[RMDB]
RNA sequence: GGGAACGACUCGAGUAGAGUCGAAAAUAGCUGACGUUCGCGUCAGCUAAAAGCACCAAAACCUCCUGGCGGUGCGGCGCCGGCCCGGCCGGGAAGGCCGCCAACUCGAUGGGUUCGCCCAUCGAAAACUUUGAGUAGCAUUCGUGCUACUCAAAGUAAAAGAAACAACAACAACAAC
Reactivity to DMS in 0.01 (KOAc 150mM, MgCl2 10mM, bicine 150mM(pH8.5), 24C), signal-to-noise 1, nucleotides 027 to 126: u000a000g000c000u000g000a010c000g020u010u020c220g020c020g020u000c000a030g010c000u000a000a010a060a140g010c100a160c020c020a060a060a090a230c040c030u000c030c050u000g000g030c040g000g020u000g000c000g020g000c080g010c000c020g000g010c020c080c110g000g030c040c000g000g000g000a110a090g000g000c050c030g000c050c030a090a140c140u000c010g020a010u020g000g000g030u010u000c220g000c000c000c000a000u000c000g000a020a020a090
Reactivity to 2A3 in 0.01 (KOAc 150mM, MgCl2 10mM, bicine 150mM(pH8.5), 24C), signal-to-noise 1, nucleotides 027 to 126: u040a000g000c000u000g000a000c000g020u040u050c230g040c020g090u020c000a000g010c000u000a020a020a000a000g030c020a080c050c000a000a030a070a200c030c020u130c010c040u070g030g000c010g010g000u100g300c050g020g010c170g130c010c000g050g000c030c050c080g190g050c000c020g000g030g040a040a000g070g000c000c020g000c000c010a020a030c030u000c000g000a000u010g000g010g030u020u020c160g080c000c000c000a010u000c010g000a030a000a000
Notes: Chemical mapping of a 177-nucleotide RNA with DMS and 2A3. For 2A3 the reverse transcriptase was SuperScript II with manganese.